[RMDB]
RNA sequence: GGGAACGACUCGAGUAGAGUCGAAAAACCUGAUGGUUCUGAUUCAGAAGGGCCAGGAGAUCGCCCUGGGACGGAUGCACCUGAACAGCCUGCCAGCCCGUGAGGGUCUGCAAUACCCUAAAUACGAAAACAAAUAGCUAUUCGUAGCUAUUUGUUUAAAAGAAACAACAACAACAAC
Reactivity to 2A3 in 0.01 (KOAc 150mM, MgCl2 10mM, bicine 150mM(pH8.5), 24C), signal-to-noise 6, nucleotides 027 to 126: a010c040c000u060g090a100u110g030g030u070u020c030u030g090a230u140u110c040a050g050a130a060g080g010g030c010c010a020g050g030a080g010a080u150c060g030c030c000c010u040g020g010g030a020c040g040g010a020u090g030c040a040c030c010u010g010a060a020c010a020g020c010c010u030g010c020c020a030g020c010c010c030g020u040g070a040g010g020g000u030c010u050g000c010a020a070u080a140c000c010c000u090a090a090a020u230a090c130g070a040
Reactivity to DMS in 0.01 (KOAc 150mM, MgCl2 10mM, bicine 150mM(pH8.5), 24C), signal-to-noise 9, nucleotides 027 to 126: a090c030c000u000g010a120u000g000g010u000u000c020u000g010a180u010u000c100a090g010a180a070g010g010g010c020c030a060g000g000a100g010a080u000c130g000c060c020c010u000g010g010g010a080c100g000g010a090u010g000c080a060c060c030u000g000a070a070c080a080g010c180c030u000g010c060c040a090g000c030c020c020g020u010g010a100g000g000g010u000c060u000g010c120a070a100u010a110c020c010c010u000a050a060a110u010a100c210g000a100